[RMDB]
RNA sequence: GGGAACGACUCGAGUAGAGUCGAAAACAGGUAUAAACAACCGCCCUGUAUAAAGAUACGGUUGGAAAACAGAAGGAAAACUGAACAACCCACCUCGAUUAGCACAUCGACCGAGGUUGUAUGACAAACAAUUUCCGCUAUUCGUAGCGGAAAUUGUAAAAGAAACAACAACAACAAC
Reactivity to 2A3 in 0.01 (KOAc 150mM, MgCl2 10mM, bicine 150mM(pH8.5), 24C), signal-to-noise 2, nucleotides 027 to 126: c030a000g000g050u070a020u070a120a210a000c000a000a000c000c000g080c070c020c000u030g010u010a300u010a040a020a000g050a000u120a060c020g000g020u000u000g000g030a080a000a000a030c080a090g020a070a260g000g010a120a020a000a000c000u010g150a110a010c080a030a000c000c010c010a040c000c000u010c030g020a060u090u060a040g090c050a060c060a300u070c020g060a100c000c020g000a000g000g030u000u040g000u040a030u060g090a040c080a030a130
Reactivity to DMS in 0.01 (KOAc 150mM, MgCl2 10mM, bicine 150mM(pH8.5), 24C), signal-to-noise 2, nucleotides 027 to 126: c000a030g000g000u000a100u060a190a120a090c000a020a000c000c100g000c300c010c000u000g020u000a030u000a000a000a000g030a000u030a090c040g020g000u040u000g020g000a080a060a150a170c040a000g000a030a030g000g000a070a050a050a030c030u000g000a210a010c110a000a000c000c000c020a130c010c010u000c000g030a050u000u000a120g010c170a050c120a000u020c080g010a010c040c020g000a080g000g040u010u030g120u040a010u030g050a100c300a050a030
Chemical mapping of a 177-nucleotide RNA with 2A3 and DMS. The 2A3 profile rests on 1,020 reads. Conditions: 150 mM KOAc, 10 mM MgCl2 and 150 mM bicine (pH 8.5), 24 C. Source: RMDB library OK1LIB, as collected in RNAgym.